[RMDB]
RNA sequence: GGGAACGACUCGAGUAGAGUCGAAAAACAUCAGUUACGACUGAUGAACCUGAGCCUUGCACUGAGAUGGGAGUGGUGUAAGGCUCAGGUAUGCACAGCUCCCAUCUCAGAACAAGGCUCGGGUGAACCCUAGGAAAUAAUUCGUUAUUUCCUAGGGAAAAGAAACAACAACAACAAC
Reactivity to 2A3 in 0.01 (KOAc 150mM, MgCl2 10mM, bicine 150mM(pH8.5), 24C), signal-to-noise 4, nucleotides 027 to 126: a000c010a000u010c000a000g010u030u060a070c210g030a020c130u000g000a000u010g040a020a010c000c000u000g000a000g010c000c000u020u010g010c070a030c070u010g000a010g000a060u030g010g010g010a020g010u040g010g010u000g020u000a110a170g010g000c010u000c000a010g000g010u000a000u010g000c000a000c000a010g020c000u000c000c000c000a010u010c000u010c000a030g010a030a020c010a020a010g020g010c010u010c010g000g000g000u020g020a050a070
Reactivity to DMS in 0.01 (KOAc 150mM, MgCl2 10mM, bicine 150mM(pH8.5), 24C), signal-to-noise 7, nucleotides 027 to 126: a130c020a000u000c000a000g010u000u010a090c170g030a070c000u000g000a010u000g000a100a050c010c000u000g000a000g000c010c000u000u000g020c300a100c010u000g000a020g010a020u000g010g010g000a020g020u020g010g030u000g000u000a070a070g020g010c030u000c090a010g010g010u010a010u000g000c000a020c010a240g000c010u000c000c000c000a010u000c010u000c010a010g000a070a060c010a010a020g000g010c000u000c010g010g000g000u000g000a070a130

An RNA of 177 nucleotides, treated with 2A3 and DMS and read out base by base. Conditions: 150 mM KOAc, 10 mM MgCl2 and 150 mM bicine (pH 8.5), 24 C. Values cover nucleotides 27 to 126.